Annotation: This 207-nucleotide RNA was probed chemically with 2A3 and DMS.
RNA sequence: GGGAACGACUCGAGUAGAGUCGAAAACGCGAUCCGCGAGGCCCGCAACGAACGCAUCGUUACCCAUUCCGCCACCGGAACCGGCAUAGUCGUCGAAGCAGGGCGUUCCGUCGACGUCUUUCGUCCCGCCGAAUCCGUACGGCGAGAGCGGAUUGACGCCGUAGUACGAAUUCGUUCGUACUACGGCAAAAGAAACAACAACAACAAC
Reactivity to 2A3 in 0.01 (KOAc 150mM, MgCl2 10mM, bicine 150mM(pH8.5), 24C), signal-to-noise 3, nucleotides 027 to 156: c060g040c010g020a040u060c050c040g020c050g040a080g060g020c000c040c000g050c080a080a030c050g020a100a010c050g010c170a090u050c050g080u030u070a130c010c010c000a020u070u000c040c000g040c050c030a080c040c030g000g010a020a050c080c010g000g000c040a050u110a100g060u090c030g000u000c010g040a040a020g100c120a170g000g040g050c030g060u150u090c020c010g040u060c030g030a020c000g040u060c000u050u100u050c080g050u020c040c050c010g000c000c000g010a010a070u020c000c010g020u060a100c100g000g000c010g030a040g000a000g020c010g000g050a030u000u050g050a060c010
Reactivity to DMS in 0.01 (KOAc 150mM, MgCl2 10mM, bicine 150mM(pH8.5), 24C), signal-to-noise 1, nucleotides 027 to 156: c100g000c060g010a110u010c020c000g000c000g000a180g000g080c020c010c060g080c030a090a090c030g020a020a110c110g040c090a110u000c020g030u000u000a100c000c000c020a190u000u000c030c000g000c060c060a200c240c010g010g030a030a060c110c060g000g050c060a200u020a080g010u000c080g010u000c050g020a080a130g050c020a040g020g000g020c030g020u010u000c020c000g010u010c060g010a020c020g000u000c040u000u000u010c080g000u000c070c000c050g000c090c000g010a060a050u010c010c030g000u000a020c000g000g020c000g000a030g030a200g000c010g000g020a120u000u000g000a290c110
The reactions ran in a buffer of 150 mM KOAc, 10 mM MgCl2 and 150 mM bicine (pH 8.5), at 24 C.